[RMDB]
RNA sequence: GGGAACGACUCGAGUAGAGUCGAAAACAUCACCAGGGUUGAGUCAGAGAACAAAGUGGUGAUUCUGGACUCCUUCGAUCCGCUUGUGGCAGAGGAGGAUGAGCGGGAGGUCUCCGUACCCGCAGAACUAUUAGAAAAUCUUCGGAUUUUCUAAUAGAAAAGAAACAACAACAACAAC
Reactivity to DMS in 0.01 (KOAc 150mM, MgCl2 10mM, bicine 150mM(pH8.5), 24C), signal-to-noise 6, nucleotides 027 to 126: c150a040u010c030a030c000c020a050g000g010g010u000u010g000a130g030u020c150a130g000a120g010a070a060c050a040a080a110g010u010g000g010u000g010a030u000u000c080u010g010g000a200c140u010c000c020u010u000c030g000a160u020c050c020g010c190u030u020g020u050g020g010c110a070g000a300g000g020a020g010g000a040u010g010a170g000c030g000g000g020a130g000g000u020c010u010c010c010g010u020a050c010c000c000g020c040a130g010a090a200
Reactivity to 2A3 in 0.01 (KOAc 150mM, MgCl2 10mM, bicine 150mM(pH8.5), 24C), signal-to-noise 9, nucleotides 027 to 126: c040a020u030c000a010c000c000a030g170g110g040u080u100g060a100g100u120c140a090g090a040g050a300a040c040a060a110a050g080u030g020g020u020g010a020u060u020c050u080g090g020a030c010u010c020c000u030u050c030g120a150u050c030c030g080c140u150u190g110u210g150g000c070a040g010a030g050g010a020g010g010a040u080g070a030g010c010g010g000g010a040g030g040u030c030u010c030c000g010u030a060c000c000c000g000c000a000g000a030a020

An RNA of 177 nucleotides, treated with DMS and 2A3 and read out base by base. For DMS the reverse transcriptase was MarathonRT. For 2A3 the reverse transcriptase was SuperScript II with manganese. For DMS, 17,798 sequencing reads were counted. It was measured as part of the RMDB library OK1LIB.